RNA sequence: GGGAACGACUCGAGUAGAGUCGAAAAGCCGUGCUCGAGAGGGAGCAGAAAAUGCAGAGCUAUCCCGUCGUUUCGCUAAACAAAUGCGAAACGACAAAUUGCGAUACAUACGCAAUCCUCUAAUGAAUUACUAUAUAAGGUUCGCCUUAUAUAGUAAAAAAGAAACAACAACAACAAC
Reactivity to DMS in 0.01 (KOAc 150mM, MgCl2 10mM, bicine 150mM(pH8.5), 24C), signal-to-noise 8, nucleotides 027 to 126: g020c030c040g010u010g020c010u000c020g000a050g000a040g000g010g010a050g010c020a090g000a060a070a090a080u010g020c100a080g000a160g010c040u000a130u000c010c030c030g020u000c000g010u000u000u000c000g000c000u000a040a110a130c300a070a070a090u010g000c000g000a000a000a000c000g000a010c010a020a040a030u000u000g000c010g010a120u010a070c210a110u010a130c040g000c010a030a030u000c010c010u000c010u010a100a130u000g000a120a100
Reactivity to 2A3 in 0.01 (KOAc 150mM, MgCl2 10mM, bicine 150mM(pH8.5), 24C), signal-to-noise 7, nucleotides 027 to 126: g010c000c010g100u040g000c010u010c020g100a050g000a010g040g050g010a010g000c020a010g150a020a190a010a020u230g010c040a020g040a050g080c010u020a050u070c020c000c010g000u000c000g000u000u000u000c010g010c000u050a170a190a120c070a050a100a010u100g000c000g000a000a000a000c000g000a000c000a000a070a000u030u020g000c000g020a020u030a240c070a050u200a070c030g000c010a000a020u010c000c010u030c010u050a080a110u140g050a050a080